[RMDB]
RNA sequence: GGGAACGACUCGAGUAGAGUCGAAAACGACUGCGUUUCGACGCAGUCGAACAUUAUGUGGUGAAAUAUAAAAGCCGAAAUUCCGAUACCAUAUAAUUUUAAUUACCUACGAGUUCGCUCGUAGGAACCCAAGAUCUACGUUCGCGUAGAUCUUGGGAAAAGAAACAACAACAACAAC
Reactivity to 2A3 in 0.01 (KOAc 150mM, MgCl2 10mM, bicine 150mM(pH8.5), 24C), signal-to-noise 1, nucleotides 027 to 126: c000g000a000c010u000g000c000g020u000u030u090c170g030a000c000g000c000a000g000u000c000g000a000a000c010a010u000u090a010u020g020u020g030g020u030g070a050a250a000u120a020u040a090a180a040a050g030c040c060g060a120a100a090u150u050c080c010g050a080u050a120c000c000a020u010a020u010a120a010u010u120u060u130a200a250u170u110a140c010c000u000a000c000g020a000g040u000u100c160g060c110u000c000g000u010a000g000g000a000a020